RNA sequence: GGGAACGACUCGAGUAGAGUCGAAAAAGGGGGCAACGCAUCGUAGCUGCCGGCUGGGGCAAGUAAGCCAUGUGUGUCACCUUUCUGCACAGACACAGACGAUGCCGUGGCCGAAGACGACGAAGCACCGCUAUGGGCGGUUCGCCGCCCAUAGCGGAAAAGAAACAACAACAACAAC
Reactivity to 2A3 in 0.01 (KOAc 150mM, MgCl2 10mM, bicine 150mM(pH8.5), 24C), signal-to-noise 1, nucleotides 027 to 126: a000g090g070g000g000g000c090a100a000c100g000c070a020u000c000g030u030a100g000c020u000g090c120c060g020g000c000u000g000g090g000g020c060a050a120g090u000a140a000g000c000c040a060u140g060u000g140u000g040u050c030a030c130c040u000u170u000c040u100g030c070a020c000a040g020a090c010a060c000a000g070a000c000g080a010u000g020c020c000g300u050g040g100c000c000g050a000a000g000a000c010g000a000c000g030a000a030g000c060a020
Annotation:
Structure probing data (2A3) for a 177-nucleotide construct. Values cover nucleotides 27 to 126. The data come from the RNA Mapping Database (RMDB), library OK1LIB. 2A3 adducts were read by reverse transcription with SuperScript II with manganese. The RNA was probed in 150 mM KOAc, 10 mM MgCl2 and 150 mM bicine (pH 8.5) at 24 C.